[RMDB]
RNA sequence: GGGAACGACUCGAGUAGAGUCGAAAAGUCAGGCAUCACACUGAUCGCGCGAUUGGCGAUAUGACGUGCGCCGCCAGCUGUCACAUCGGUAGACCGGCCCACACGUUCAUUCGUAACGCCGAGCUGAGCGCCACGGAUGGUUCGCCAUCCGUGGCGCAAAAGAAACAACAACAACAAC
Reactivity to 2A3 in 0.01 (KOAc 150mM, MgCl2 10mM, bicine 150mM(pH8.5), 24C), signal-to-noise 1, nucleotides 027 to 126: g040u040c010a010g000g000c000a020u000c000a180c000a000c060u050g030a000u060c040g080c000g000c000g180a150u000u250g130g050c000g000a000u060a020u210g000a000c000g030u000g000c000g080c080c000g020c050c000a060g000c020u000g020u050c050a060c000a300u010c200g010g000u000a060g030a090c000c010g000g000c040c120c000a000c000a000c050g060u090u120c080a090u000u060c000g020u070a060a140c000g030c020c000g000a000g000c040u200g040a020